[RMDB]
RNA sequence: GGGAACGACUCGAGUAGAGUCGAAAAUGCACAAGGGAGCUUGACUGUGAGACUGACAGGUCGAGCAGGGACGAAAGUCGGGACUAGUGAUCCGGCACCGGCAAGUGGAAGCGGUGUCGCUCAACGGCGUUGGUCCAUGGUUCGCCAUGGACCAACGAAAAGAAACAACAACAACAAC
Reactivity to DMS in 0.01 (KOAc 150mM, MgCl2 10mM, bicine 150mM(pH8.5), 24C), signal-to-noise 2, nucleotides 027 to 126: u020g000c030a000c060a030a060g000g000g020a170g000c100u000u000g030a040c000u000g000u010g020a150g020a010c120u000g000a190c300a000g000g000u020c020g000a160g040c040a200g030g000g010a060c070g070a030a080a110g020u000c010g000g000g000a130c050u020a110g020u000g000a080u040c120c000g000g030c000a020c000c000g010g050c050a130a190g010u010g000g030a140a090g000c010g010g000u000g000u000c000g030c300u000c020a070a100c170g000g000
Reactivity to 2A3 in 0.01 (KOAc 150mM, MgCl2 10mM, bicine 150mM(pH8.5), 24C), signal-to-noise 1, nucleotides 027 to 126: u180g010c040a020c000a100a040g000g000g000a060g030c000u020u060g050a050c010u050g000u020g080a020g090a050c000u020g080a060c050a110g200g040u030c000g000a010g050c000a000g000g050g000a000c000g080a120a000a000g020u000c000g000g000g090a010c000u130a140g030u050g020a020u000c020c010g020g000c000a020c000c000g120g000c050a080a020g140u040g040g090a080a000g050c000g000g010u040g000u030c000g000c020u080c030a020a120c060g100g010